An RNA of 177 nucleotides, treated with DMS and 2A3 and read out base by base. For 2A3, 3,246 sequencing reads were counted. The data come from the RNA Mapping Database (RMDB), library TTRINS.
RNA sequence: GGGAACGACUCGAGUAGAGUCGAAAAGAUAUGGAUCCUGACUCGCUUGGAUUUAUACUGAACUUAGUAUAGUCGGAAACGACUAUACUAUCAAUAAGUAUUGUCAGCGAGGAUGGAUCCUAAGUCACUUAACUAGUUCGUUCGCGAACUAGUUAAGAAAAGAAACAACAACAACAAC
Reactivity to DMS in 0.01 (KOAc 150mM, MgCl2 10mM, bicine 150mM(pH8.5), 24C), signal-to-noise 2, nucleotides 027 to 126: g000a020u010a300u030g000g010a000u000c000c000u010g040a300c000u000c020g010c010u010u010g030g020a020u000u000u000a020u000a010c000u000g020a180a220c120u000u000a000g000u000a000u000a000g000u000c000g000g020a140a110a220c010g020a020c000u000a000u000a000c000u000a000u000c010a030a190u000a130a040g010u000a010u000u000g000u000c000a040g000c000g010a000g000g020a290u000g020g000a010u000c000c000u000a020a110g000u000c040a210
Reactivity to 2A3 in 0.01 (KOAc 150mM, MgCl2 10mM, bicine 150mM(pH8.5), 24C), signal-to-noise 2, nucleotides 027 to 126: g040a030u080a110u120g000g000a010u000c030c000u060g200a070c010u040c010g030c050u100u270g300g020a100u290u300u090a020u070a000c010u000g020a060a010c010u020u000a010g000u010a010u000a010g010u030c020g030g050a110a150a050c030g030a000c000u000a000u000a000c010u000a000u010c000a010a200u020a030a000g000u010a000u030u040g020u030c000a000g000c010g000a000g020g010a000u030g000g000a000u000c010c000u000a010a010g000u000c010a010